[RMDB]
RNA sequence: GGGAACGACUCGAGUAGAGUCGAAAAGCACAUCUGUGUGUGACAGGGAAGAACCUCUCAGUUAAAUUAAGUGAAAACGGUACACUGAAGAACUGUGUAGUUGCUGAUAGCGAAACGGAUAUAGAUAGGUCAUUACUCGUUUCGACGAGUAAUGACCAAAAGAAACAACAACAACAAC
Reactivity to DMS in 0.01 (KOAc 150mM, MgCl2 10mM, bicine 150mM(pH8.5), 24C), signal-to-noise 1, nucleotides 027 to 126: g010c000a080c050a150u030c110u010g010u010g040u010g010u000g010a120c110a040g010g000g000a080a110g000a150a180c090c100u000c020u000c020a050g030u000u000a060a100a070u000u010a010a050g010u010g010a050a100a080a050c170g010g010u000a080c120a000c010u000g000a140a140g000a090a020c010u000g030u000g010u010a070g030u000u010g000c120u010g000a150u000a090g000c030g020a040a060a070c080g010g000a030u000a040u070a100g020a140u040a090
Structure probing data (DMS) for a 177-nucleotide construct. High DMS reactivity at an A or C suggests that its Watson-Crick edge is free. The DMS profile rests on 641 reads. The reactions ran in a buffer of 150 mM KOAc, 10 mM MgCl2 and 150 mM bicine (pH 8.5), at 24 C.